RNA sequence: GGGAACGACUCGAGUAGAGUCGAAAACAGGGAUUGUCCUCCUCGAGUUUCUUGAUGGUUCUCUUGGCCUUCCGGAGCCUUCUCUCGAGAUCGUCCGCAUCCUUUCUUGCCUGCACCCACUUUUCGAAAAGAAUGCAGUUCGCUGCAUUCAAAAGAAACAACAACAACAAC
Reactivity to DMS in 0.01 (KOAc 150mM, MgCl2 10mM, bicine 150mM(pH8.5), 24C), signal-to-noise 9, nucleotides 027 to 129: c060a080g030g030g030a160u030u030g040u040c000c000u000c000c000u020c050g000a040g000u010u040u030c050u030u060g040a070u060g030g040u030u020c040u000c030u030u030g040g040c050c060u020u030c030c080g010g000a110g000c110c050u030u000c030u000c020u020c030g030a010g000a080u020c030g040u030c020c030g000c090a100u050c060c060u020u030u030c060u050u030g030c030c020u040g030c100a140c000c000c000a110c090u050u030u010u030c080g010a080a100a080a080
Reactivity to 2A3 in 0.01 (KOAc 150mM, MgCl2 10mM, bicine 150mM(pH8.5), 24C), signal-to-noise 9, nucleotides 027 to 129: c050a040g040g020g070a080u070u130g090u070c000c010u020c010c010u020c030g060a090g030u040u090u030c050u070u110g080a110u120g040g010u100u040c030u000c000u040u120g040g000c010c000u070u040c040c020g030g000a020g010c000c000u060u050c030u010c000u000c010g040a040g030a180u020c020g030u020c010c010g030c030a100u080c010c000u040u060u040c020u030u060g040c000c000u030g000c010a060c010c010c000a060c040u070u090u050u070c030g050a030a040a030a080